[RMDB]
RNA sequence: GGGAACGACUCGAGUAGAGUCGAAAAACUGCAUCUACGGAUGCAGCACUACGUUCAUCCAAUUUAUUUGGACGCAUGAAAUGAGAAUAGGGAACGGGAUUCUCAUACGCAGGCUACGGCCUGCGAAAAAACUCCUUAUGCUUCGGCAUAAGGAGAAUCGUAUAGUCUUGUUCGCAAGACUAUACGAAAAAGAAACAACAACAACAAC
Reactivity to 2A3 in 0.01 (KOAc 150mM, MgCl2 10mM, bicine 150mM(pH8.5), 24C), signal-to-noise 3, nucleotides 027 to 156: a000c000u000g000c000a000u000c000u010a030c190g110g000a000u000g000c010a000g000c000a050c080u200a040c020g000u000u010c020a020u000c000c010a020a000u110u180u110a150u160u070u020g000g000a010c000g000c020a040u130g100a120a160a010u000g000a020g010a020a000u010a030g090g020g020a000a000c010g030g000g000a010u000u000c000u000c000a000u030a050c010g000c000a000g010g000c000u020a090c300g110g000c000c000u000g000c000g010a010a000a000a000a000a000c000u000c000c000u010u000a000u000g000c000u020u050c160g110g010c010a000u000a000a000g000g000a000g000a000a020
Reactivity to DMS in 0.01 (KOAc 150mM, MgCl2 10mM, bicine 150mM(pH8.5), 24C), signal-to-noise 2, nucleotides 027 to 156: a020c000u000g000c000a020u000c000u000a090c300g040g030a030u000g020c000a010g020c010a070c030u020a010c030g010u000u000c000a240u000c120c100a150a140u010u000u000a100u030u000u020g000g010a000c000g000c010a070u000g010a050a070a040u000g010a080g020a040a090u000a140g000g000g000a080a110c010g000g030g000a300u000u000c010u000c020a060u010a110c030g060c010a030g010g000c000u000a090c300g060g000c020c000u030g000c010g000a000a020a050a030a030a010c010u000c000c000u000u010a000u000g010c000u000u010c300g020g020c000a020u000a010a010g010g010a000g000a000a010

Description
Chemical mapping of a 207-nucleotide RNA with 2A3 and DMS. 2A3 adducts were read by reverse transcription with SuperScript II with manganese. Conditions: 150 mM KOAc, 10 mM MgCl2 and 150 mM bicine (pH 8.5), 24 C. The data come from the RNA Mapping Database (RMDB), library M2RFOK.